[RMDB]
RNA sequence: GGGAACGACUCGAGUAGAGUCGAAAAGAUAAUUGUUCACAGUGUUGCCACUCCUGGCUCUGCUAUAUCUGUUUAUUUAUCUGCAAUAUAGGCAGCCAUGCAGCCCCGCGUACUCCACUGGAGUCACCCCUAAUUCUAAAUUCGUUUAGAAUUAGGGAAAAGAAACAACAACAACAAC
Reactivity to DMS in 0.01 (KOAc 150mM, MgCl2 10mM, bicine 150mM(pH8.5), 24C), signal-to-noise 5, nucleotides 027 to 126: g000a100u000a050a100u000u010g010u010u000c060a080c080a080g020u010g010u000u000g010c040c040a090c090u010c060c060u000g010g000c050u000c040u000g020c030u000a070u000a060u000c070u000g000u000u000u010a070u030u000u010a070u020c090u010g010c060a050a050u000a060u010a050g000g010c060a040g010c100c060a060u000g010c050a060g000c050c010c010c060g010c110g020u000a020c010u000c010c020a070c130u010g000g000a040g000u000c070a070c120
Reactivity to 2A3 in 0.01 (KOAc 150mM, MgCl2 10mM, bicine 150mM(pH8.5), 24C), signal-to-noise 4, nucleotides 027 to 126: g030a010u140a060a120u210u140g040u170u120c060a020c030a090g070u050g050u170u090g030c030c010a040c060u050c020c050u030g020g000c010u010c020u070g030c010u020a020u010a030u130c040u000g040u040u110u020a160u060u160u090a160u050c060u060g020c040a060a030u040a020u010a120g100g000c000a020g030c010c010a020u070g000c010a010g020c010c000c000c010g050c020g020u040a010c000u010c010c030a170c130u080g040g000a030g000u020c020a050c020